The record gives the reactivity of an RNA of 177 nucleotides to 2A3 and DMS.
The 2A3 profile rests on 1,787 reads.
It was measured as part of the RMDB library RFM100.
Reactivities are given for positions 27 through 126.
[RMDB]
RNA sequence: GGGAACGACUCGAGUAGAGUCGAAAAGUAAGACCCCGUGGAGGGCCGAACGCACGUCGGUUGAAAACGGCGGCGAUGACCUGCGGGUAGGGGUGAAAGGCCUAUCAAACCCGGAGAUAUCUCGUUCCAUUUGUAGACCGUUCGCGGUCUACAAAUGAAAAGAAACAACAACAACAAC
Reactivity to 2A3 in 0.01 (KOAc 150mM, MgCl2 10mM, bicine 150mM(pH8.5), 24C), signal-to-noise 4, nucleotides 027 to 126: g030u020a080a010g090a130c000c010c000c040g150u140g080g050a130g020g030g030c010c040g050a120a030c020g000c050a210c060g010u030c010g000g050u050u100g090a080a090a070a000c000g010g010c000g000g000c010g000a020u100g060a030c000c040u050g080c000g020g020g020u070a060g010g040g000g000u010g030a090a040a000g110g010c020c000u060a090u060c030a040a100a080c000c000c010g090g000a020g000a010u200a110u030c080u020c040g060u050u040c040
Reactivity to DMS in 0.01 (KOAc 150mM, MgCl2 10mM, bicine 150mM(pH8.5), 24C), signal-to-noise 2, nucleotides 027 to 126: g000u000a100a130g000a190c040c000c000c070g010u010g000g020a120g000g000g000c000c030g010a120a100c000g000c010a050c030g060u010c010g000g020u000u020g000a130a110a130a100c000g000g000c000g000g000c010g000a120u030g000a120c030c000u000g020c020g000g030g000u020a140g020g000g000g000u000g010a070a170a130g000g010c020c030u000a120u010c070a050a110a160c040c000c000g000g010a040g000a070u010a160u000c130u020c010g010u020u020c060